An RNA of 177 nucleotides, treated with 2A3 and DMS and read out base by base. The data come from the RNA Mapping Database (RMDB), library OK2TRN. Reactivities are given for positions 27 through 126. The 2A3 profile rests on 1,565 reads. Conditions: 150 mM KOAc, 10 mM MgCl2 and 150 mM bicine (pH 8.5), 24 C.

[RMDB]
RNA sequence: GGGAACGACUCGAGUAGAGUCGAAAACACAGUGAGUCACUGUGAGUGAGACACUCUCUCUGUCACUCUGUGUGACUCUGACAGUCACAGAGAGUCUGUGUCUGUGAGACUGUGUGUCAGUCUCUGAUCACGUUACCGACUUCGGUCGGUAACGUGAAAAAGAAACAACAACAACAAC
Reactivity to 2A3 in 0.01 (KOAc 150mM, MgCl2 10mM, bicine 150mM(pH8.5), 24C), signal-to-noise 2, nucleotides 027 to 126: c010a020c030a050g050u010g070a050g090u030c020a000c020u020g050u040g180a030g000u020g060a060g050a010c000a040c140u110c000u020c000u030c020u050g180u040c020a020c040u030c020u020g120u010g000u020g170a000c010u010c000u040g030a020c000a010g020u010c000a000c010a000g080a000g010a030g280u010c020u110g020u000g010u000c000u000g070u020g010a030g020a020c000u010g040u010g010u030g090u170c020a060g110u000c000u000c000u050g040a040
Reactivity to DMS in 0.01 (KOAc 150mM, MgCl2 10mM, bicine 150mM(pH8.5), 24C), signal-to-noise 2, nucleotides 027 to 126: c010a020c000a010g010u010g000a060g020u010c000a080c000u000g000u000g010a070g020u000g000a040g010a060c110a070c070u000c090u010c040u000c030u020g020u000c020a030c020u000c040u000g020u000g010u000g000a030c000u000c030u000g020a020c040a020g000u000c050a000c000a000g000a180g010a140g000u000c050u000g000u000g010u000c010u020g030u000g000a090g010a070c020u000g020u000g000u000g010u000c130a090g010u010c010u000c010u000g000a240